[RMDB]
RNA sequence: GGGAACGACUCGAGUAGAGUCGAAAAGGGUGAUCCACCAGGAGGGUGGAGGAGGGUUCACCUCCAGAGGACCCCUUCAGCGAACGGAAGAGCCUCCUCCUUCGGAGAGAAAGACCAUAGCGAUGGGCAUCUCGUUGAACUUCGGUUCAACGAGAUGAAAAGAAACAACAACAACAAC
Reactivity to DMS in 0.01 (KOAc 150mM, MgCl2 10mM, bicine 150mM(pH8.5), 24C), signal-to-noise 1, nucleotides 027 to 126: g010g000g050u020g000a240u000c000c010a120c070c040a300g020g000a080g010g000g020u010g000g000a010g000g000a020g010g000g000u000u000c130a040c020c000u000c020c060a060g000a090g000g000a090c040c000c020c020u000u000c080a050g000c050g000a060a060c060g020g000a070a020g000a090g010c020c000u000c040c000u000c030c010u000u000c090g040g010a120g000a050g000a090a070a090g010a030c020c030a030u000a110g020c120g010a160u000g000g000g020